[RMDB]
RNA sequence: GGGAACGACUCGAGUAGAGUCGAAAACACGUAUGCACGUUCUCUUCGGCGAGGUCGCUGGGUUCGUGGAAGAUAAAGCGCCGCGUGUCGGCGCCGGCCUCGCCGCCGUCGUCCGCGCGGCCCACGCGUCAACACCGUUAUUCGUAACGGUGUUGACAAAAGAAACAACAACAACAAC
Reactivity to 2A3 in 0.01 (KOAc 150mM, MgCl2 10mM, bicine 150mM(pH8.5), 24C), signal-to-noise 2, nucleotides 027 to 126: c100a000c040g070u110a070u280g050c040a000c010g010u050u020c040u020c000u070u100c030g030g000c050g040a040g110g000u030c020g000c110u120g020g150g000u090u090c020g030u080g060g080a120a030g040a100u190a170a180a040g040c040g000c000c010g000c130g050u090g080u170c050g000g010c000g000c010c000g000g010c000c010u080c030g030c020c010g000c000c010g040u010c020g000u000c000c000g030c000g000c000g000g000c000c010c000a030c020g060c020
Reactivity to DMS in 0.01 (KOAc 150mM, MgCl2 10mM, bicine 150mM(pH8.5), 24C), signal-to-noise 2, nucleotides 027 to 126: c050a280c210g070u000a020u030g040c040a030c080g000u030u000c010u000c030u030u000c020g030g000c000g000a070g030g010u000c010g020c070u000g000g040g000u010u000c000g070u010g000g020a110a060g000a130u000a030a010a110g000c000g000c000c000g030c010g030u030g000u070c050g040g000c030g010c000c010g000g000c030c050u040c220g020c000c080g060c100c020g030u000c010g060u000c130c090g000c090g040c060g000g020c000c040c060a150c060g000c140
An RNA of 177 nucleotides, treated with 2A3 and DMS and read out base by base.
High 2A3 reactivity points to a flexible backbone, as in loops and unpaired stretches.
Conditions: 150 mM KOAc, 10 mM MgCl2 and 150 mM bicine (pH 8.5), 24 C.
DMS adducts were read by reverse transcription with MarathonRT.
Source: RMDB library OK1LIB, as collected in RNAgym.
For 2A3, 2,684 sequencing reads were counted.